[RMDB]
RNA sequence: GGGAACGACUCGAGUAGAGUCGAAAAGAUAUGGACUCCUAACAGGCAACAGCAUGCAGUCGGAAACGACUGUCAUGACAUGCCUGGUGGAGUCCUAAGUCAAAAUCCGUCUGUUCGCAGACGGAAACGGGAUGUAUCAGUUCGCUGAUACAUCCCGAAAAGAAACAACAACAACAAC
Reactivity to DMS in 0.01 (KOAc 150mM, MgCl2 10mM, bicine 150mM(pH8.5), 24C), signal-to-noise 2, nucleotides 027 to 126: g000a080u000a240u020g000g000a000c000u000c000c000u000a150a160c010a000g020g000c000a100a050c200a240g020c000a010u000g010c020a010g000u000c000g000g000a040a020a060c000g060a000c000u000g010u000c000a020u000g000a020c070a300u000g040c000c000u000g000g030u000g000g000a010g010u000c000c000u000a000a020g000u000c000a120a060a140a080u010c000c010g050u000c000u000g030u010u020c190g020c000a000g000a000c010g010g000a010a000a040
Reactivity to 2A3 in 0.01 (KOAc 150mM, MgCl2 10mM, bicine 150mM(pH8.5), 24C), signal-to-noise 2, nucleotides 027 to 126: g020a000u010a030u070g000g000a000c000u020c000c020u160a300a200c050a000g010g000c030a300a070c020a300g020c020a020u010g000c000a010g040u030c000g030g000a010a010a000c030g010a000c000u000g010u090c000a000u000g030a010c000a190u300g010c000c000u020g020g000u020g020g010a010g000u000c000c000u000a000a000g000u000c010a000a000a010a300u000c000c000g010u000c000u020g080u070u100c300g000c130a000g010a020c030g000g000a040a010a010